Conditions: 150 mM KOAc, 10 mM MgCl2 and 150 mM bicine (pH 8.5), 24 C. Structure probing data (DMS) for a 177-nucleotide construct. It was measured as part of the RMDB library TTRINS. Reactivities are rounded to 0.1 and cut off at 0 and 3. For DMS, 4,449 sequencing reads were counted.
RNA sequence: GGGAACGACUCGAGUAGAGUCGAAAAGAUAUGGAGAACCGAUUGCGUCCUGACUGACGGGAGCUGGUACUCGGAAACGAGUACACAGCGACGAUCGUUUCAGGACGCAAUCGGUUCUCCUAAGUCACAUAGAUACAAACUUCGGUUUGUAUCUAUGAAAAGAAACAACAACAACAAC
Reactivity to DMS in 0.01 (KOAc 150mM, MgCl2 10mM, bicine 150mM(pH8.5), 24C), signal-to-noise 3, nucleotides 027 to 126: g000a050u000a300u000g010g000a020g020a010a020c000c010g010a020u000u020g000c000g000u000c010c000u010g010a050c300u010g040a020c000g010g000g010a120g030c010u020g000g020u000a010c010u000c010g000g000a120a120a160c010g000a010g010u000a010c010a100c000a000g010c010g000a080c160g000a060u000c000g000u000u000u000c010a010g000g020a010c010g000c010a000a000u000c010g000g000u010u000c000u000c000c000u000a000a070g010u000c050a240